[RMDB]
RNA sequence: GGGAACGACUCGAGUAGAGUCGAAAAACAAAAUGUGGAGUGACGUGGGCCUCUGCAAGAAGCGACCAAAACCUGGAGGAGGAUGGAACACUGGGGCGAGCCGAUACCCAGGACAGGGCAGAAAAAACCUUAAACUCUGAUUCGUCAGAGUUUAAGGAAAAGAAACAACAACAACAAC
Reactivity to 2A3 in 0.01 (KOAc 150mM, MgCl2 10mM, bicine 150mM(pH8.5), 24C), signal-to-noise 2, nucleotides 027 to 126: a000c050a000a080a010a050u070g010u050g020g020a050g020u080g030a040c070g000u080g040g100g000c010c010u010c040u030g020c000a000a070g060a100a000g030c050g030a060c010c040a030a050a010a090c010c030u050g000g010a040g050g020a020g040g010a060u080g030g010a090a020c040a020c100u040g000g010g000g020c020g020a030g000c000c000g020a040u120a130c000c020c000a000g000g000a000c020a030g020g000g040c010a050g100a000a060a010a000a000a000
Reactivity to DMS in 0.01 (KOAc 150mM, MgCl2 10mM, bicine 150mM(pH8.5), 24C), signal-to-noise 3, nucleotides 027 to 126: a050c070a050a060a060a070u010g020u000g020g010a060g010u000g010a070c110g020u000g030g020g020c050c010u000c050u010g000c080a050a080g010a110a080g020c050g000a120c060c060a040a030a100a080c100c030u010g000g010a040g010g000a060g010g020a070u010g010g000a060a050c110a060c050u010g000g000g010g000c050g020a060g030c050c020g020a080u010a090c020c000c010a070g010g010a050c070a040g010g000g020c070a040g000a000a030a070a080a070a080
Structure probing data (2A3 and DMS) for a 177-nucleotide construct. DMS adducts were read by reverse transcription with MarathonRT. 2A3 adducts were read by reverse transcription with SuperScript II with manganese. The RNA was probed in 150 mM KOAc, 10 mM MgCl2 and 150 mM bicine (pH 8.5) at 24 C.